[RMDB]
RNA sequence: GGGAACGACUCGAGUAGAGUCGAAAAGGCAGUGCACAGGCUUGAAAUGCAGCUGGAAUGAACCUCUGAUCGUGGUGCAACGGAACCGAGACCAACCCGUGGCCGGUAGCGCGGCCCCGGAGGUUCCGCGUUCCCUCUGUUUCGACAGAGGGAACGCAAAAGAAACAACAACAACAAC
Reactivity to 2A3 in 0.01 (KOAc 150mM, MgCl2 10mM, bicine 150mM(pH8.5), 24C), signal-to-noise 2, nucleotides 027 to 126: g060g020c020a000g070u020g080c060a030c030a010g070g010c040u070u100g040a130a140a020u120g020c050a020g000c030u010g000g080a110a150u130g020a040a060c000c010u000c000u000g060a090u100c030g060u070g010g070u120g090c030a110a050c000g000g040a000a000c000c050g070a090g100a160c020c010a040a110c000c000c020g020u000g000g020c000c030g010g000u040a040g020c070g000c000g070g000c000c010c000c000g010g010a030g030g000u070u020c050c050
Reactivity to DMS in 0.01 (KOAc 150mM, MgCl2 10mM, bicine 150mM(pH8.5), 24C), signal-to-noise 1, nucleotides 027 to 126: g030g000c020a210g000u000g030c050a000c110a100g000g000c020u000u030g000a130a110a100u020g000c070a040g000c140u020g020g020a150a040u000g000a090a020c020c020u000c020u000g000a000u000c050g020u040g000g050u000g000c070a030a140c110g000g000a020a030c000c000g060a250g100a210c050c100a070a260c180c000c000g000u030g000g000c000c000g000g000u000a050g000c280g000c130g000g000c050c000c070c000g000g000a140g000g000u000u000c030c160
Description
Chemical mapping of a 177-nucleotide RNA with 2A3 and DMS. For 2A3 the reverse transcriptase was SuperScript II with manganese. Conditions: 150 mM KOAc, 10 mM MgCl2 and 150 mM bicine (pH 8.5), 24 C. For 2A3, 1,177 sequencing reads were counted. Values cover nucleotides 27 to 126. For DMS the reverse transcriptase was MarathonRT.